[RMDB]
RNA sequence: GGGAACGACUCGAGUAGAGUCGAAAAUAUCCAAGGGUUUGCCUGUGGAUGUGGGGCAUCAUAUACAGCUAAUGAUGUCGAAGUCCAAUCAUCUGGCAUGAUUAAGCCAAAUGCUCUUCUUUGUGCUGAACAACUCUGUUCGCAGAGUUGAAAAGAAACAACAACAACAAC
Reactivity to 2A3 in 0.01 (KOAc 150mM, MgCl2 10mM, bicine 150mM(pH8.5), 24C), signal-to-noise 9, nucleotides 027 to 129: u140a030u020c020c010a020a030g050g020g020u080u160u150g150c010c010u150g030u080g110g010a010u020g050u080g060g110g000g000c010a000u010c000a010u070a020u050a100c040a030g020c030u080a110a020u030g010a000u000g000u000c010g020a090a010g060u000c020c000a020a050u090c000a020u000c050u070g020g000c010a030u090g050a130u260u160a090a030g010c000c000a030a050a030u100g010c000u000c010u130u020c020u050u110u090g060u050g020c010u010g010a040a010
Reactivity to DMS in 0.01 (KOAc 150mM, MgCl2 10mM, bicine 150mM(pH8.5), 24C), signal-to-noise 9, nucleotides 027 to 129: u050a040u010c010c000a070a050g020g000g020u030u030u040g030c000c010u020g000u040g010g000a020u010g050u020g030g040g020g020c010a000u000c020a010u030a110u010a110c080a060g020c080u000a160a090u020g000a010u010g000u000c010g010a110a110g040u020c010c010a090a100u040c050a050u020c070u040g000g020c000a040u050g020a130u030u060a100a080g000c000c030a030a050a040u030g000c200u000c070u030u020c060u000u000u000g040u010g000c030u000g000a090a220
This 170-nucleotide RNA was probed chemically with 2A3 and DMS.
The RNA was probed in 150 mM KOAc, 10 mM MgCl2 and 150 mM bicine (pH 8.5) at 24 C.
The data come from the RNA Mapping Database (RMDB), library 15KLIB.
The 2A3 profile rests on 70,873 reads.
For 2A3 the reverse transcriptase was SuperScript II with manganese.
The DMS profile rests on 89,216 reads.